[RMDB]
RNA sequence: GGGAACGACUCGAGUAGAGUCGAAAAAGUUUCAGCAUGGAUGGACUCGUUAAAGAAGUCUAUGCAACCUUUAGAUGCAGACGAUUAUUCGUAUGCAAUGGCUGCCUAAUUAGCAAAAGUUAAUUAACCAGCCAUCGCUCUUCAGCGGAGGCGCUUAUCUAUCCAUUAACUUCGGUUAAUGGAUAGAAAAAGAAACAACAACAACAAC
Reactivity to DMS in 0.01 (KOAc 150mM, MgCl2 10mM, bicine 150mM(pH8.5), 24C), signal-to-noise 2, nucleotides 027 to 156: a050g020u000u010u010c020a130g000c020a030u000g010g020a050u000g040g000a200c050u000c060g010u010u020a090a090a050g010a110a200g010u000c000u000a030u000g020c030a100a100c040c020u000u010u000a100g020a130u010g010c040a080g010a010c020g020a060u010u010a220u010u010c030g050u000a060u000g000c000a030a020u010g010g010c010u010g000c070c060u010a020a010u000u000a030g000c020a040a140a070a230g020u000u000a020a020u000u000a010a080c060c020a000g010c020c000a000u000c010g030c000u000c050u000u010c060a110g020c070g000g000a070g020g000c070g000c060u000u000a110
Reactivity to 2A3 in 0.01 (KOAc 150mM, MgCl2 10mM, bicine 150mM(pH8.5), 24C), signal-to-noise 6, nucleotides 027 to 156: a000g040u030u050u070c040a010g020c020a020u040g010g030a010u020g020g040a050c030u040c110g130u130u240a140a080a050g050a070a010g010u000c000u000a000u010g020c020a040a050c010c000u040u050u100a130g020a110u130g020c000a010g000a040c020g010a020u060u070a080u300u210c030g010u010a020u030g000c000a020a020u010g000g000c000u000g000c000c010u010a010a000u010u000a000g000c020a070a170a300a090g010u020u000a000a000u010u010a000a030c040c000a000g000c000c000a020u020c020g020c000u040c040u210u160c100a010g010c020g050g010a020g020g000c030g000c040u040u060a060